[RMDB]
The data come from the RNA Mapping Database (RMDB), library VIROID. This 207-nucleotide RNA was probed chemically with 2A3 and DMS. Values cover nucleotides 27 to 156.
RNA sequence: GGGAACGACUCGAGUAGAGUCGAAAAGUUCGCUCUCGUAGUCACAGCCGCUGGGGAACCUAGGCAGAAGGCUGGACGGAGUCUUAGUCCACUCCAAAGGACCUUGGGUUUACUAACCCCCAAGAGGUCGGCACCUGACGUCGGUGUCCUGACGAAGGAAGAAUACUAUCUUCGGAUAGUAUUCUUCAAAAGAAACAACAACAACAAC
Reactivity to 2A3 in 0.01 (KOAc 150mM, MgCl2 10mM, bicine 150mM(pH8.5), 24C), signal-to-noise 4, nucleotides 027 to 156: g050u090u110c040g000c030u020c020u010c020g100u100a030g030u050c030a050c010a270g010c000c010g050c070u030g000g000g020g060a050a070c000c030u040a110g070g070c040a030g090a150a040g020g020c030u020g000g050a020c040g030g000a020g020u000c050u050u070a030g010u030c030c010a030c030u050c020c020a130a070a060g050g030a060c010c010u020u040g040g010g020u060u130u080a120c060u100a050a100c030c000c000c000c010a020a020g050a040g040g050u030c000g000g020c020a020c010c030u110g080a090c090g040u120c030g040g000u010g050u060c000c090u140g010a020c030g040a020a010g150
Reactivity to DMS in 0.01 (KOAc 150mM, MgCl2 10mM, bicine 150mM(pH8.5), 24C), signal-to-noise 2, nucleotides 027 to 156: g010u010u010c040g020c050u000c020u000c050g050u000a080g020u000c010a100c070a130g000c000c010g000c050u000g020g010g040g000a060a120c060c010u000a110g000g050c040a150g000a060a050g010g010c080u010g010g020a120c090g000g020a110g070u000c090u000u000a120g010u000c090c040a080c030u020c010c030a060a130a260g020g020a050c000c040u000u000g030g020g000u000u000u010a250c120u010a100a160c060c050c000c000c050a050a120g000a110g020g000u000c040g020g010c030a050c020c000u000g010a170c140g040u010c110g000g020u010g000u010c000c080u000g030a110c030g010a180a110g010